[RMDB]
RNA sequence: GGGAACGACUCGAGUAGAGUCGAAAACGACGCCCAUGUAUCCGGCUUCAACAUUGUAAGGAUUUGCUCUGUACGCUACCGUGGGGCGACCUGGAAUCGUGCCACCUAGUAUCAGUCAGCAGCAUAGGUUUAUAUUAAUAUUCGUAUUAAUAUAAACAAAAGAAACAACAACAACAAC
Reactivity to DMS in 0.01 (KOAc 150mM, MgCl2 10mM, bicine 150mM(pH8.5), 24C), signal-to-noise 6, nucleotides 027 to 126: c090g000a130c140g010c020c010c020a080u030g010u010a040u010c040c030g010g020c050u010u000c060a080a100c130a070u020u010g000u010a090a090g020g010a080u010u010u020g010c010u000c010u000g010u020a050c040g010c100u000a030c100c180g010u010g000g010g010g000c020g010a020c050c040u030g010g000a120a180u000c020g020u010g000c010c020a030c020c060u020a060g000u000a040u020c070a100g000u000c030a020g010c090a030g000c030a050u010a100g000
Reactivity to 2A3 in 0.01 (KOAc 150mM, MgCl2 10mM, bicine 150mM(pH8.5), 24C), signal-to-noise 9, nucleotides 027 to 126: c030g080a010c040g030c000c010c010a020u080g020u010a030u010c020c020g030g000c030u110u090c030a070a080c030a140u100u190g070u190a070a080g060g020a050u000u010u080g000c000u000c000u010g060u090a020c060g010c030u020a030c020c050g010u030g000g000g010g000c010g010a010c010c060u120g090g100a060a060u030c010g010u040g160c000c000a010c000c020u030a020g010u030a050u100c020a020g070u020c030a000g000c020a000g000c010a050u080a100g050